[RMDB]
An RNA of 177 nucleotides, treated with 2A3 and DMS and read out base by base. Source: RMDB library OK2TRN, as collected in RNAgym. The reactions ran in a buffer of 150 mM KOAc, 10 mM MgCl2 and 150 mM bicine (pH 8.5), at 24 C. For DMS, 4,339 sequencing reads were counted. DMS adducts were read by reverse transcription with MarathonRT.

RNA sequence: GGGAACGACUCGAGUAGAGUCGAAAAACAUUUUGCUCAAGAUUGCCGACCGCAUGGAGCAGAACCUCGAGAUGCUGGCGGUCGCCGAAACCUGGGACAACGGCAAGCCGGUGCGCGAGACGCUCGCUCACGAAGACAAUUUCGAUUGUCUUCGUGAAAAAGAAACAACAACAACAAC
Reactivity to 2A3 in 0.01 (KOAc 150mM, MgCl2 10mM, bicine 150mM(pH8.5), 24C), signal-to-noise 4, nucleotides 027 to 126: a010c040a040u090u120u080u120g020c020u030c050a100a100g070a260u070u060g020c020c030g090a100c000c030g030c080a050u160g230g010a010g030c020a010g020a060a070c030c020u060c030g130a140g030a150u070g030c010u030g030g000c020g000g050u040c040g020c020c000g120a180a140a080c020c030u060g040g030g020a020c030a070a020c070g030g000c030a010a010g000c020c000g040g020u030g010c030g010c000g000a020g000a040c060g010c070u030c020g020c000
Reactivity to DMS in 0.01 (KOAc 150mM, MgCl2 10mM, bicine 150mM(pH8.5), 24C), signal-to-noise 5, nucleotides 027 to 126: a100c110a160u000u000u000u000g020c030u000c020a130a090g010a140u000u000g010c100c050g010a110c110c050g010c030a050u000g020g000a030g020c020a030g010a080a100c120c040u000c100g000a130g010a130u000g010c030u000g010g010c020g000g010u000c070g020c040c020g010a030a080a080c100c050u000g010g010g010a080c080a070a130c080g000g010c040a130a160g010c030c030g000g020u000g010c050g000c020g000a070g000a120c110g010c020u000c050g010c150

Annotation:
2A3 adducts were read by reverse transcription with SuperScript II with manganese.